Structure probing data (DMS and 2A3) for a 177-nucleotide construct.
For DMS the reverse transcriptase was MarathonRT.
Reactivities are given for positions 27 through 126.
The 2A3 profile rests on 15,772 reads.
RNA sequence: GGGAACGACUCGAGUAGAGUCGAAAAACAUUUCACAGAUGGCACAGAGUGGGGAAGUCAGUGACCCAAGGUGGCAAGCCAGCUCUUGCUGAUGGUGAGGAGCCUCAUUAUCUUAAGACAACACACAGUGGAGACAUGAGUUCGCUCAUGUCUUCACAAAAGAAACAACAACAACAAC
Reactivity to DMS in 0.01 (KOAc 150mM, MgCl2 10mM, bicine 150mM(pH8.5), 24C), signal-to-noise 7, nucleotides 027 to 126: a100c140a070u020u020u020c080a060c090a090g020a110u030g010g000c020a050c140a040g000a070g030u000g010g000g010g000a120a110g010u020c060a060g010u020g000a090c050c030c010a090a080g020g000u010g000g020c040a050a090g000c040c030a130g010c050u020c020u010u010g010c010u000g000a020u040g010g030u000g010a050g000g010a130g010c070c020u010c030a030u020u010a020u010c030u010u020a060a070g000a090c140a070a060c130a060c160a130c220a100
Reactivity to 2A3 in 0.01 (KOAc 150mM, MgCl2 10mM, bicine 150mM(pH8.5), 24C), signal-to-noise 9, nucleotides 027 to 126: a000c050a070u080u130u090c060a050c010a040g130a100u110g060g010c030a050c020a060g050a040g080u090g020g030g010g020a110a050g080u070c050a040g060u060g160a130c020c000c000a020a040g080g030u050g020g010c010a020a020g040c010c040a110g020c040u020c010u040u050g010c020u030g020a070u060g010g030u020g020a030g020g060a060g070c010c000u030c010a040u030u110a060u060c010u030u090a060a050g080a070c040a170a030c040a070c040a000c020a120
2A3 adducts were read by reverse transcription with SuperScript II with manganese.
The RNA was probed in 150 mM KOAc, 10 mM MgCl2 and 150 mM bicine (pH 8.5) at 24 C.